[RMDB]
RNA sequence: GGGAACGACUCGAGUAGAGUCGAAAAGGUGCUCUGAAUGGAGUGCUCUACUGAGAUUAUAAAAUAGAAGGUAAGCUAUUAUCUCUUACAACAGGGCAGGGCUUGUUGAAAUAGGCGGUAAAGUCUAAAAACUACCUCACCUUCGGGUGAGGUAGAAGUUAUGUGUUAUGUUCGCAUAACACAUAACAAAAGAAACAACAACAACAAC
Reactivity to 2A3 in 0.01 (KOAc 150mM, MgCl2 10mM, bicine 150mM(pH8.5), 24C), signal-to-noise 6, nucleotides 027 to 156: g070g020u020g000c000u010c010u040g130a140a100u210g010g000a010g020u030g000c010u020c030u070a090c060u050g030a020g030a080u080u120a070u280a140a120a120a050u120a040g070a100a020g090g010u090a030a010g020c020u020a050u130u030a050u130c020u000c010u040u080a040c020a100a030c020a040g000g020g000c010a010g010g010g020c030u030u020g000u000u000g020a030a030a070u050a030g000g010c010g010g060u120a130a080a000g010u010c020u070a030a030a020a030a040c000u000a000c000c000u000c000a000c000c000u030u070c190g090g010g000u000g000a000g000g000u000a000g000a000a000
Reactivity to DMS in 0.01 (KOAc 150mM, MgCl2 10mM, bicine 150mM(pH8.5), 24C), signal-to-noise 3, nucleotides 027 to 156: g030g060u000g020c010u000c000u010g010a160a140u010g070g010a050g000u000g010c030u000c020u000a110c030u010g010a110g000a160u010u010a160u000a080a080a100a110u000a070g010a140a110g020g030u010a060a090g030c090u000a090u000u000a070u000c020u000c010u000u000a100c090a050a190c050a050g000g010g020c020a100g020g000g050c040u000u010g000u010u010g000a040a050a110u000a060g010g030c010g020g000u000a050a020a120g010u000c030u020a020a030a080a110a170c000u000a000c000c000u000c000a020c000c020u000u000c300g060g030g010u000g000a000g010g010u000a000g010a000a090
This 207-nucleotide RNA was probed chemically with 2A3 and DMS.
The RNA was probed in 150 mM KOAc, 10 mM MgCl2 and 150 mM bicine (pH 8.5) at 24 C.
For DMS, 5,088 sequencing reads were counted.